[RMDB]
This 177-nucleotide RNA was probed chemically with DMS.
RNA sequence: GGGAACGACUCGAGUAGAGUCGAAAAACUGCCUGUUUCGACAGGCAGUAGUCUACUUCGCGCAACCGCCGAGUCGUUCCCGCGCUUGCGUGAAGUAGUUUGAUAUGAUCUUAUUCGUAAGAUCAAAUCUAUUGAGGGGGUUCGCCCCCUCAAUAGAAAAAGAAACAACAACAACAAC
Reactivity to DMS in 0.01 (KOAc 150mM, MgCl2 10mM, bicine 150mM(pH8.5), 24C), signal-to-noise 1, nucleotides 027 to 126: a060c010u000g010c010c000u000g000u010u000u000c150g000a060c000a000g010g020c000a010g030u000a000g000u010c000u010a000c010u000u000c010g030c000g020c020a000a000c210c000g040c040c290g030a150g010u000c000g010u000u000c010c000c000g030c010g020c160u000u000g000c000g020u000g000a010a010g010u000a010g000u000u020u010g020a110u000a130u000g000a020u000c000u000u000a030u000u010c180g010u010a010a020g010a000u000c000a020a080a120
Background: The RNA was probed in 150 mM KOAc, 10 mM MgCl2 and 150 mM bicine (pH 8.5) at 24 C. DMS adducts were read by reverse transcription with MarathonRT.